The data come from the RNA Mapping Database (RMDB), library OK2TRN. Chemical mapping of a 177-nucleotide RNA with 2A3 and DMS. The RNA was probed in 150 mM KOAc, 10 mM MgCl2 and 150 mM bicine (pH 8.5) at 24 C. DMS adducts were read by reverse transcription with MarathonRT.
RNA sequence: GGGAACGACUCGAGUAGAGUCGAAAACAUGUCACGUGACAUUCUAUAGUGGAUCGGUAUACACCUAUAAUGUGACCGUGCGAGGUAGACACGUUGAGGCAUUUAGCGUGACUCAAUGACGUGGAGCGAUUGAUACUCCAUUCGUGGAGUAUUAGUCAAAAGAAACAACAACAACAAC
Reactivity to 2A3 in 0.01 (KOAc 150mM, MgCl2 10mM, bicine 150mM(pH8.5), 24C), signal-to-noise 9, nucleotides 027 to 126: c020a020u060g020u030c000a000c050g040u050g050a020c010a060u060u000c030u040a050u020a050g070u080g100g040a080u060c050g040g020u090a090u020a110c020a010c010c020u040a030u030a120a070u060g010u010g030a020c010c010g010u020g030c020g020a040g040g090u040a010g010a030c010a000c020g000u000u030g010a010g020g000c020a010u030u010u010a070g020c040g020u010g010a020c000u010c020a040a130u140g030a020c030g010u030g020g070a060g080c080
Reactivity to DMS in 0.01 (KOAc 150mM, MgCl2 10mM, bicine 150mM(pH8.5), 24C), signal-to-noise 9, nucleotides 027 to 126: c050a050u000g010u000c010a190c070g010u000g010a110c100a070u000u000c070u000a040u000a080g020u010g010g000a080u010c070g010g010u000a070u000a090c030a020c050c050u010a070u010a060a130u000g010u000g000a040c050c020g010u000g010c060g000a100g010g010u000a040g000a090c040a030c020g010u000u000g010a020g000g000c020a020u000u000u000a100g030c200g010u000g000a040c010u000c010a060a090u010g010a040c040g020u000g000g000a130g010c180